[RMDB]
RNA sequence: GGGAACGACUCGAGUAGAGUCGAAAAGCUAUCGGUGCGUGACGGUACCGGGGUCAGCCACCGGCUGGUCCGGAUCGACGACCCGAUCCUGCGGGUGCCGCAGCUGGCGAUUCACCUGGCCGAGGACCGACAAUACGGGUUUCGACCCGUAUUGUCGAAAAGAAACAACAACAACAAC
Reactivity to 2A3 in 0.01 (KOAc 150mM, MgCl2 10mM, bicine 150mM(pH8.5), 24C), signal-to-noise 2, nucleotides 027 to 126: g030c020u040a010u100c010g020g000u060g060c040g060u050g150a130c010g000g000u090a300c000c020g000g000g000g040u030c010a000g030c050c040a280c150c140g030g000c000u020g020g040u000c010c010g000g000a020u010c000g050a050c010g060a050c010c020c020g010a020u040c020c010u130g200c060g060g020g070u070g060c000c000g000c000a010g030c030u080g000g030c010g000a030u070u080c040a040c150c010u030g120g000c010c020g020a050g010g030a030c050
Reactivity to DMS in 0.01 (KOAc 150mM, MgCl2 10mM, bicine 150mM(pH8.5), 24C), signal-to-noise 3, nucleotides 027 to 126: g000c080u010a080u000c010g020g020u020g020c040g010u000g000a150c050g000g000u000a070c010c010g020g010g010g000u010c010a010g010c000c000a160c270c220g000g010c010u010g010g010u010c000c020g000g000a040u000c030g010a090c030g000a060c070c030c020g010a010u000c050c010u000g010c060g010g030g020u000g000c120c030g010c070a050g000c100u010g000g010c030g010a180u010u000c070a090c040c000u000g020g020c020c030g010a130g000g020a170c160